[RMDB]
RNA sequence: GGGAACGACUCGAGUAGAGUCGAAAAAAGCCGCGGUACGGGCCGGCGCUACAGCGCAAGAAGCCGCUGAGGCCAUCGGGGUCACCAUCUUGAUGCACGGUGGACCGGCCACCAUCCACGGUGCUCGGAAUAUACAGUGCUUCGGCACUGUAUAUUCAAAAGAAACAACAACAACAAC
Reactivity to 2A3 in 0.01 (KOAc 150mM, MgCl2 10mM, bicine 150mM(pH8.5), 24C), signal-to-noise 2, nucleotides 027 to 126: a000a000g060c010c000g010c070g020g010u050a030c050g010g040g020c020c000g020g020c100g010c040u070a110c010a030g040c000g000c040a060a100g170a080a030g240c100c040g060c110u060g030a060g050g070c060c000a080u080c060g050g010g050g040u050c020a040c100c000a100u080c060u110u090g040a100u090g020c080a030c150g030g000u040g000g060a060c010c010g000g000c020c010a010c010c000a010u060c000c000a020c030g020g020u040g030c020u020c020g100
Reactivity to DMS in 0.01 (KOAc 150mM, MgCl2 10mM, bicine 150mM(pH8.5), 24C), signal-to-noise 2, nucleotides 027 to 126: a110a150g010c010c000g030c030g030g000u000a090c300g000g000g020c000c050g000g000c140g000c060u010a100c060a080g020c000g010c020a110a060g000a080a100g030c150c030g020c240u010g000a200g040g000c010c030a060u000c110g010g010g020g010u010c120a090c080c050a020u000c070u000u000g010a080u010g010c020a040c070g000g030u000g010g010a160c030c040g020g000c020c000a030c090c010a140u000c000c020a020c020g010g000u000g020c010u010c050g000